This 177-nucleotide RNA was probed chemically with DMS. The reactions ran in a buffer of 150 mM KOAc, 10 mM MgCl2 and 150 mM bicine (pH 8.5), at 24 C. For DMS, 716 sequencing reads were counted. DMS adducts were read by reverse transcription with MarathonRT. Reactivities are given for positions 27 through 126.
RNA sequence: GGGAACGACUCGAGUAGAGUCGAAAACGAAACAGGCGAUGCUAAGUCCGUGAAGCCGUUCCGGACCCUUCGGGGAAUGGAAAGUGGUGGAGCCGACGGACCAGACUUGCAGUAGGUGAGUGAUGGGCCGGGACGAAGGAUUCGUCCUUCGUCCCGGAAAAGAAACAACAACAACAAC
Reactivity to DMS in 0.01 (KOAc 150mM, MgCl2 10mM, bicine 150mM(pH8.5), 24C), signal-to-noise 2, nucleotides 027 to 126: c020g000a120a160a120c060a020g020g010c010g020a300u000g000c020u000a060a200g000u010c000c120g050u010g010a300a150g070c010c020g010u000u000c000c000g030g000a300c010c010c000u000u020c090g020g000g010g020a020a280u000g000g030a010a030a000g000u000g030g050u000g000g020a270g010c010c210g060a050c010g000g000a090c300c070a020g020a170c000u000u010g000c010a050g010u000a040g010g000u000g000a010g030u000g010a090u010g000g000g000